[RMDB]
RNA sequence: GGGAACGACUCGAGUAGAGUCGAAAAGAUAUGGAGAGGAUGGGAGAACACAUCGGAAACGAUGUAGUUCGAAGAACAUCUCUCUCCUAAGUCAAAACCAUCACGCAUGCUUCGGCAUGCGUGAUGGCAUCUCUGACACGUUCGCGUGUCAGAGAUGAAAAGAAACAACAACAACAAC
Reactivity to 2A3 in 0.01 (KOAc 150mM, MgCl2 10mM, bicine 150mM(pH8.5), 24C), signal-to-noise 1, nucleotides 027 to 126: g010a000u000a000u060g010g000a010g000a000g050g000a000u000g050g010g000a060g000a000a000c010a000c000a020u010c000g010g000a000a000a010c010g000a010u010g010u050a080g010u000u020c070g040a300a040g030a000a000c000a000u010c060u010c000u000c000u000c160c000u000a030a000g010u000c020a050a020a050a240c000c000a000u010c000a020c010g000c000a000u020g000c020u090u120c300g150g060c000a010u020g030c010g010u000g010a000u010g000g000
Reactivity to DMS in 0.01 (KOAc 150mM, MgCl2 10mM, bicine 150mM(pH8.5), 24C), signal-to-noise 2, nucleotides 027 to 126: g000a010u000a040u020g010g000a030g000a030g010g010a000u000g000g000g000a030g020a030a000c010a050c000a000u000c000g020g000a010a000a050c000g020a020u000g000u000a050g020u000u010c010g020a060a150g000a160a300c000a010u000c010u020c010u000c010u010c000c000u010a000a120g000u010c020a110a110a150a240c010c000a010u000c010a000c000g000c000a010u000g000c010u000u070c300g010g010c020a000u000g010c010g030u010g000a010u000g000g000
An RNA of 177 nucleotides, treated with 2A3 and DMS and read out base by base.
The DMS profile rests on 2,444 reads.
The 2A3 profile rests on 4,589 reads.
In probing experiments dimethyl sulfate is read out at A N1 and C N3, which are open when not base-paired.
For 2A3 the reverse transcriptase was SuperScript II with manganese.